[RMDB]
RNA sequence: GGGAACGACUCGAGUAGAGUCGAAAAAUAAUAACGAUAAGGGCGACGUAAAGUCGCCCAUUUUGUCUCUUCUUAACAUUAAUUGGUUUGGCCGCCGACAAGUUAAGAAGCUUCAAUUCUGGCGUUAGGAUUAAGACCUAUUCGUAGGUCUUAAUCCAAAAGAAACAACAACAACAAC
Reactivity to 2A3 in 0.01 (KOAc 150mM, MgCl2 10mM, bicine 150mM(pH8.5), 24C), signal-to-noise 3, nucleotides 027 to 126: a000u260a010a030u090a040a030c060g030a020u050a170a200g000g000g010c010g040a030c110g090u230a080a070a180g010u020c000g000c010c000c000a000u000u000u000u000g000u010c000u010c000u000u010c010u000u020a000a010c000a110u090u140a150a130u070u200g010g050u030u010u130g080g000c000c000g030c000c000g010a040c020a100a000g000u000u000a010a000g000a000a000g020c030u030u010c010a010a200u070u010c020u200g170g000c030g030u010u030a030
Reactivity to DMS in 0.01 (KOAc 150mM, MgCl2 10mM, bicine 150mM(pH8.5), 24C), signal-to-noise 2, nucleotides 027 to 126: a070u000a090a120u030a040a050c060g010a060u010a070a120g070g010g000c000g000a000c000g000u030a130a100a250g040u010c000g030c000c030c000a000u000u010u000u000g020u000c020u000c000u000u000c000u000u000a000a000c000a110u010u050a110a270u000u000g010g010u000u000u000g010g020c230c140g000c000c000g020a040c070a070a070g020u010u010a000a000g010a000a000g000c120u000u000c000a050a030u010u000c190u020g040g000c000g000u000u010a070